[RMDB]
RNA sequence: GGGAACGACUCGAGUAGAGUCGAAAAGAAAGUGCUUCUCACUUUCCAAUAAGGUAUCCUUUUGGGCUGAAACUUUCCAUGCUCAGUUUCAGCUCAAAGGUGAAUUUAUUUUGGAAAGUUCACACAAGCUAAGCAGGGUUUUCGAACCCUGCUUAGCAAAAGAAACAACAACAACAAC
Reactivity to DMS in 0.01 (KOAc 150mM, MgCl2 10mM, bicine 150mM(pH8.5), 24C), signal-to-noise 1, nucleotides 027 to 126: g010a090a060a160g030u020g000c150u030u000c000u000c090a120c000u000u000u000c000c040a000a070u060a000a020g020g020u100a090u000c010c000u000u000u000u040g040g030g000c000u040g000a000a000a000c000u000u010u030c040c030a000u050g000c120u020c070a000g010u000u000u000c010a040g000c000u000c010a000a000a040g030g020u060g020a220a030u040u030u030a000u010u000u000u000g040g000a130a000a000g000u000u020c060a090c060a080c210a020a210
Reactivity to 2A3 in 0.01 (KOAc 150mM, MgCl2 10mM, bicine 150mM(pH8.5), 24C), signal-to-noise 2, nucleotides 027 to 126: g080a020a110a000g150u070g020c050u040u010c020u040c010a000c000u000u000u000c000c000a030a000u010a020a000g040g010u110a100u080c000c000u020u050u090u080g010g000g000c000u010g000a000a000a040c020u150u170u010c040c010a130u220g030c020u040c080a000g000u010u000u000c020a000g000c000u000c000a000a000a000g000g000u010g000a000a000u010u040u040a040u030u080u040u010g000g000a030a010a000g000u070u090c040a020c000a010c020a140a100

Annotation
Chemical mapping of a 177-nucleotide RNA with DMS and 2A3. For DMS the reverse transcriptase was MarathonRT. For DMS, 1,249 sequencing reads were counted. Source: RMDB library RFM100, as collected in RNAgym. Conditions: 150 mM KOAc, 10 mM MgCl2 and 150 mM bicine (pH 8.5), 24 C.